An RNA of 207 nucleotides, treated with 2A3 and read out base by base.
For 2A3, 1,710 sequencing reads were counted.
[RMDB]
RNA sequence: GGGAACGACUCGAGUAGAGUCGAAAAUGACGUUAAACUGCUGACUCAUACAUACUGACACCGGUUGCUCAACAGGCUGUGUGGGACAAAAGAAUAACAAGGCUGUCAAUUUGAGCUUGACGGCUGCAAAACCUGCAGUACUUCGGUACUGCAGGAACACUUGUAGCGGGUUCGCCCGCUACAAGUGAAAAGAAACAACAACAACAAC
Reactivity to 2A3 in 0.01 (KOAc 150mM, MgCl2 10mM, bicine 150mM(pH8.5), 24C), signal-to-noise 3, nucleotides 027 to 156: u100g080a000c110g020u030u040a030a060a050c050u060g030c000u060g050a060c020u020c010a000u010a050c000a010u140a060c030u110g070a030c020a060c070c030g110g040u160u160g050c020u040c020a020a060c020a060g010g000c040u000g020u010g010u000g050g020g000a010c060a010a070a000a010g060a020a030u050a060a000c030a050a080g040g000c010u010g000u020c000a010a000u050u100u140g030a030g080c010u000u000g000a000c000g010g020c010u030g010c010a040a040a030a140c010c000u010g020c000a000g010u020a000c010u010u080c100g070g000u000a000c000u010g000c010a000g000g000a000a000